An RNA of 177 nucleotides, treated with DMS and 2A3 and read out base by base. For DMS the reverse transcriptase was MarathonRT. Values are in units of 0.01, from 0 to 300, in steps of 10. It was measured as part of the RMDB library OK1LIB.

RNA sequence: GGGAACGACUCGAGUAGAGUCGAAAAUGACCGGAUCGAUCAUUUUGAUCGGGUCAAUGUCCGGUACCAUCGUCAACGACCCACAACCACAAUGCAUGUACAACAUGUCCAAAACCGGUGUCAUUCAACUGAUGGCUAUGUUCGCAUAGCCAUCAGUAAAAGAAACAACAACAACAAC
Reactivity to DMS in 0.01 (KOAc 150mM, MgCl2 10mM, bicine 150mM(pH8.5), 24C), signal-to-noise 3, nucleotides 027 to 126: u030g010a020c020c000g010g020a010u010c000g000a050u060c160a180u030u000u020u020g000a020u030c020g010g020g000u000c050a060a020u020g000u000c010c050g000g020u010a070c070c030a000u020c070g000u000c090a050a050c120g000a060c050c000c040a060c110a080a070c130c010a070c130a050a090u020g000c000a020u010g020u030a100c290a120a100c040a010u000g000u020c150c030a010a040a070a080c080c110g000g000u000g000u020c080a050u080u020c040a140
Reactivity to 2A3 in 0.01 (KOAc 150mM, MgCl2 10mM, bicine 150mM(pH8.5), 24C), signal-to-noise 6, nucleotides 027 to 126: u100g020a010c030c010g030g030a020u060c000g010a010u030c120a190u070u120u180u300g000a000u020c000g060g010g010u060c020a030a100u190g030u040c020c000g000g020u040a050c020c010a040u110c030g100u060c040a050a050c040g070a080c000c020c030a050c040a070a070c020c030a040c050a100a030u120g020c010a000u040g010u100a100c050a120a020c000a200u040g090u100c030c070a050a050a050a040c060c030g040g000u060g040u060c080a120u130u090c050a060